Chemical mapping of a 207-nucleotide RNA with 2A3.
Reactivities are given for positions 27 through 156.
The 2A3 profile rests on 797 reads.
Source: RMDB library M2RFPK, as collected in RNAgym.
RNA sequence: GGGAACGACUCGAGUAGAGUCGAAAAGAAACGCAAGGCCGCUGACCGACGGGAUAUUGUGGGGCUUACCACAGGGGACGCGGCGUUAUCACUUGCCUUUUAAGCCGACCGUCUGGGCUGCCUACAAACCACCCAACUAUCUUCGGAUAGUUGGGAACUCACAACUACUCUUCGGAGUAGUUGUGAGAAAAGAAACAACAACAACAAC
Reactivity to 2A3 in 0.01 (KOAc 150mM, MgCl2 10mM, bicine 150mM(pH8.5), 24C), signal-to-noise 2, nucleotides 027 to 156: g000a010a020a010c100g000c110a000a030g110g000c020c000g020c030u060g080a110c000c060g000a000c010g090g030g050a110u180a070u200u120g020u010g000g020g020g100c080u050u080a060c010c010a000c000a110g000g000g010g080a010c030g010c080g010g000c010g000u080u060a040u010c000a010c120u010u060g050c000c010u120u130u030u070a010a010g000c000c020g070a070c000c000g010u010c060u080g000g000g090c000u000g030c010c010u050a020c070a030a130a030c040c010a030c020c000c000a000a000c000u000a000u000c010u000u010c030g120g000a000u000a000g000u000u000g000g000g000a000a000
The reactions ran in a buffer of 150 mM KOAc, 10 mM MgCl2 and 150 mM bicine (pH 8.5), at 24 C.
For 2A3 the reverse transcriptase was SuperScript II with manganese.